[RMDB]
RNA sequence: GGGAACGACUCGAGUAGAGUCGAAAACGUGGUGGUCGACUACGAUCGUUUGCUGGCUCUGCCGCGACAGGAACUGGGCCGUAUUGGCCAUCGACUUUCCUUGCCGGUGGACGAGUCGGCUUGCGCAACUCGAGGGGAUCUUCGGAUCCCCUCGAGUAAAAGAAACAACAACAACAAC
Reactivity to DMS in 0.01 (KOAc 150mM, MgCl2 10mM, bicine 150mM(pH8.5), 24C), signal-to-noise 1, nucleotides 027 to 126: c050g040u010g010g020u000g000g000u010c080g010a140c020u010a010c040g010a050u000c030g020u000u000u000g020c000u000g030g000c010u000c010u000g000c040c000g020c000g000a090c000a030g020g010a020a020c290u000g010g010g000c010c010g010u010a100u000u000g020g020c010c000a080u020c160g010a300c070u020u010u000c030c010u000u020g090c000c000g010g000u010g020g010a010c090g010a010g020u000c000g000g030c000u010u000g000c040g010c300a140
Reactivity to 2A3 in 0.01 (KOAc 150mM, MgCl2 10mM, bicine 150mM(pH8.5), 24C), signal-to-noise 1, nucleotides 027 to 126: c030g010u030g020g030u050g020g150u160c080g040a060c020u070a050c060g060a120u080c010g000u000u050u050g040c010u020g020g000c000u000c030u060g040c060c010g030c030g000a060c040a000g010g000a020a010c060u120g020g030g050c040c010g080u150a300u160u300g000g110c030c000a060u020c040g180a210c000u030u020u050c000c000u020u240g010c060c010g090g010u090g000g180a070c070g000a020g000u000c000g030g030c000u000u050g000c050g000c050a040
Source: RMDB library OK2TST, as collected in RNAgym. An RNA of 177 nucleotides, treated with DMS and 2A3 and read out base by base. The reactions ran in a buffer of 150 mM KOAc, 10 mM MgCl2 and 150 mM bicine (pH 8.5), at 24 C. 2A3 adducts were read by reverse transcription with SuperScript II with manganese.